[RMDB]
RNA sequence: GGGAACGACUCGAGUAGAGUCGAAAACUAAUCUCAAGCCUGUUCGAAGAUAUUAGAUUUUAUAGGCCUCACGUAACACCUACUAGUGCCGUUGAAGGAUUCCUUAUCUGUUCUGGUAAAAGACACACGAGUUAGGGAUAUUCGUAUCCCUAACUCGAAAAGAAACAACAACAACAAC
Reactivity to DMS in 0.01 (KOAc 150mM, MgCl2 10mM, bicine 150mM(pH8.5), 24C), signal-to-noise 2, nucleotides 027 to 126: c060u000a050a120u000c030u010c000a050a110g000c030c010u000g000u000u040c050g000a110a110g010a010u000a080u000u020a050g020a070u000u020u000u000a080u020a130g010g000c030c010u010c070a040c060g020u000a070a070c110a090c070c020u010a050c090u000a030g060u030g030c050c020g000u000u030g000a160a050g000g000a060u000u000c020c000u000u000a060u010c070u000g000u030u020c000u000g000g020u010a100a090a010a060g010a070c290a040c210a170
Reactivity to 2A3 in 0.01 (KOAc 150mM, MgCl2 10mM, bicine 150mM(pH8.5), 24C), signal-to-noise 5, nucleotides 027 to 126: c000u020a030a110u040c010u050c050a040a010g030c000c010u060g050u110u110c040g040a140a040g060a080u080a110u170u130a030g070a210u080u150u050u120a190u100a010g050g050c000c020u030c000a040c010g020u060a040a010c000a020c040c030u130a080c030u040a090g010u040g050c020c010g050u020u100g050a070a040g050g020a050u100u090c020c000u080u060a040u040c040u050g030u090u010c010u010g000g020u030a030a140a030a060g050a040c040a010c000a030